The data come from the RNA Mapping Database (RMDB), library OK1LIB. This 177-nucleotide RNA was probed chemically with 2A3 and DMS.

RNA sequence: GGGAACGACUCGAGUAGAGUCGAAAAGAGAUGCACUACCAGGAGCAUCAGCAGCAUCACAGUCUGUACGAGGAGUGCCAAUCAUGGAUUGAGAAGACUCGUGAGAAGCUUUCCGAGUGCGAACAAAGCUAGCAUGCAUGUUCGCAUGCAUGCUAGCAAAAGAAACAACAACAACAAC
Reactivity to 2A3 in 0.01 (KOAc 150mM, MgCl2 10mM, bicine 150mM(pH8.5), 24C), signal-to-noise 4, nucleotides 027 to 126: g100a010g000a040u070g020c000a000c010u160a100c060c120a030g020g040a020g010c020a140u120c030a040g020c020a000g000c000a050u020c000a000c010a040g000u020c010u060g030u020a020c020g010a020g170g050a030g010u040g030c030c000a010a010u060c050a170u130g130g010a030u010u090g030a050g060a220a020g030a010c000u080c190g000u010g000a010g030a050a000g000c000u050u030u060c000c010g010a020g030u040g010c020g010a050a020c020a080a090a000
Reactivity to DMS in 0.01 (KOAc 150mM, MgCl2 10mM, bicine 150mM(pH8.5), 24C), signal-to-noise 2, nucleotides 027 to 126: g020a010g010a110u040g020c000a090c050u000a190c200c170a240g000g000a040g000c110a030u030c030a090g000c120a090g080c020a090u000c050a060c100a100g000u020c000u020g000u000a040c000g010a200g000g010a180g000u020g000c000c010a000a070u000c000a110u000g010g010a000u000u050g010a130g070a170a150g000a020c000u000c080g040u000g000a020g000a160a230g000c090u000u000u010c070c020g030a300g000u000g000c000g020a090a050c110a040a050a090
Description:
DMS adducts were read by reverse transcription with MarathonRT. The RNA was probed in 150 mM KOAc, 10 mM MgCl2 and 150 mM bicine (pH 8.5) at 24 C. In probing experiments dimethyl sulfate is read out at A N1 and C N3, which are open when not base-paired. For DMS, 2,378 sequencing reads were counted.